Chemical mapping of a 207-nucleotide RNA with DMS and 2A3. Source: RMDB library OK3TST, as collected in RNAgym. For DMS the reverse transcriptase was MarathonRT.
RNA sequence: GGGAACGACUCGAGUAGAGUCGAAAAAUUAAUUUUCAAAACUAUAUCCAACGCAAUGUCCAUGAAAUAUAAUCCGUUAGUAUUGGUCAGUGGUGAUUUAAUUUACGCGGACGUCAAAUCCGACAACAGUGAAAUACUUAUCAACAACUACGAAUUACAUAUGCUAGUACUUCGGUACUAGCAUAUGAAAAGAAACAACAACAACAAC
Reactivity to DMS in 0.01 (KOAc 150mM, MgCl2 10mM, bicine 150mM(pH8.5), 24C), signal-to-noise 2, nucleotides 027 to 156: a090u020u000a070a070u010u000u000u000c020a070a090a100a130c040u000a100u010a100u010c060c050a060a050c050g000c030a100a100u000g000u010c030c040a120u000g010a110a080a110u000a120u000a080a030u000c020c010g000u000u000a040g010u000a090u000u000g000g020u000c020a050g020u010g020g000u000g020a070u000u000u020a030a100u000u000u000a100c120g050c050g030g000a030c030g020u010c160a040a050a110u000c030c000g030a100c040a050a080c070a060g020u000g020a060a050a130u000a060c040u000u000a040u000c030a010a040c000a040a080c030u000a040c020g000a040a030u000u000a070
Reactivity to 2A3 in 0.01 (KOAc 150mM, MgCl2 10mM, bicine 150mM(pH8.5), 24C), signal-to-noise 3, nucleotides 027 to 156: a000u140u090a020a030u060u100u080u100c030a040a040a040a010c030u040a040u020a020u170c050c010a050a030c040g000c060a080a090u060g050u020c010c030a070u150g050a060a160a010u140a050u020a040a090u020c020c020g060u080u070a000g000u030a040u030u040g010g000u010c020a000g010u030g040g060u040g060a000u030u060u160a130a130u030u110u050a080c110g020c010g000g010a000c000g030u050c010a030a050a080u000c000c030g040a040c030a120a010c010a060g070u040g150a040a040a040u060a040c040u130u040a020u070c010a000a060c010a020a010c030u240a000c020g160a070a010u190u200a050